[RMDB]
RNA sequence: GGGAACGACUCGAGUAGAGUCGAAAAUGUGUAGUCCUUCGACAAUCUAACCUCAUCCUCUCUUACUAAAAGGAAGCCAGGCAAUGGGUGUUAGGAGGAAAUAAACACUGUAGCCUGGCGAAUGCGUUUUUAAGAGCUUUUUAUUGGCAACAGUGCAUCAGUAGUGAUCAUUCGUGAUCACUACUGAAAAAGAAACAACAACAACAAC
Reactivity to DMS in 0.01 (KOAc 150mM, MgCl2 10mM, bicine 150mM(pH8.5), 24C), signal-to-noise 2, nucleotides 027 to 156: u010g030u010g020u000a080g020u010c020c060u000u010c030g080a070c060a070a130u010c020u010a110a090c050c030u000c070a150u000c050c010u000c020u000c020u010u000a120c060u000a020a090a050a100g010g030a250a160g020c020c010a000g020g010c010a090a140u010g020g020g020u010g020u000u000a070g010g000a190g010g000a060a050a100u000a070a030a050c010a020c010u000g010u000a280g030c010c000u000g000g000c030g020a020a030u000g040c020g010u010u000u000u000u020a040a090g000a120g000c100u000u000u000u000u000a140u050u000g030g010c050a060a080c000a060g000u000g040c050a240
Reactivity to 2A3 in 0.01 (KOAc 150mM, MgCl2 10mM, bicine 150mM(pH8.5), 24C), signal-to-noise 6, nucleotides 027 to 156: u120g020u010g050u060a040g030u060c050c000u040u060c030g050a050c040a060a080u050c030u090a080a110c010c020u060c050a070u040c010c010u030c010u040c020u050u040a090c040u100a070a090a020a010g070g000a090a000g010c010c010a000g010g000c010a050a020u040g020g040g010u010g010u040u030a060g020g120a070g030g130a040a060a050u180a020a070a010c010a000c010u020g160u300a120g300c000c000u000g000g030c000g000a010a010u030g030c000g010u010u000u020u040u110a070a020g020a010g000c040u130u150u000u040u070a130u100u060g010g030c020a050a000c020a140g050u050g080c000a020